Structure probing data (DMS and 2A3) for a 177-nucleotide construct. Values cover nucleotides 27 to 126. The 2A3 profile rests on 2,333 reads. 2A3 adducts were read by reverse transcription with SuperScript II with manganese. For DMS, 1,632 sequencing reads were counted.

RNA sequence: GGGAACGACUCGAGUAGAGUCGAAAAGAGAGUUCGUUGUCAACGAUGUUGUCCUCGCAAUUCUCUCUGGAACCACAACUAAUGUUGACAAAAUACGCCAGCUUCUCAAAGGUGUCACCCUUGACAAGUAACGCUACUAGUUCGCUAGUAGCGUUACAAAAGAAACAACAACAACAAC
Reactivity to DMS in 0.01 (KOAc 150mM, MgCl2 10mM, bicine 150mM(pH8.5), 24C), signal-to-noise 3, nucleotides 027 to 126: g010a030g010a020g030u010u030c130g030u000u000g030u000c020a010a020c000g020a250u010g000u000u000g000u000c050c040u030c080g020c230a080a070u000u000c040u000c030u010c020u010g020g000a100a090c050c080a070c100a020a030c050u010a070a120u010g010u000u010g000a050c060a060a090a080a140u020a070c090g000c030c030a060g000c130u000u000c050u000c040a070a060a130g000g000u000g010u010c100a070c060c040c050u010u010g000a050c180a040a130
Reactivity to 2A3 in 0.01 (KOAc 150mM, MgCl2 10mM, bicine 150mM(pH8.5), 24C), signal-to-noise 2, nucleotides 027 to 126: g000a000g000a000g000u020u080c020g030u070u020g020u030c020a010a000c020g140a150u190g010u040u000g000u010c010c010u010c040g010c050a040a130u160u010c000u000c010u000c010u030g010g020a040a040c070c000a020c050a020a020c020u090a180a050u190g000u020u020g000a020c000a020a060a020a020u170a010c030g040c010c000a010g010c010u100u010c020u020c000a030a080a010g040g010u060g050u040c040a090c000c030c000u060u040g060a050c030a070a040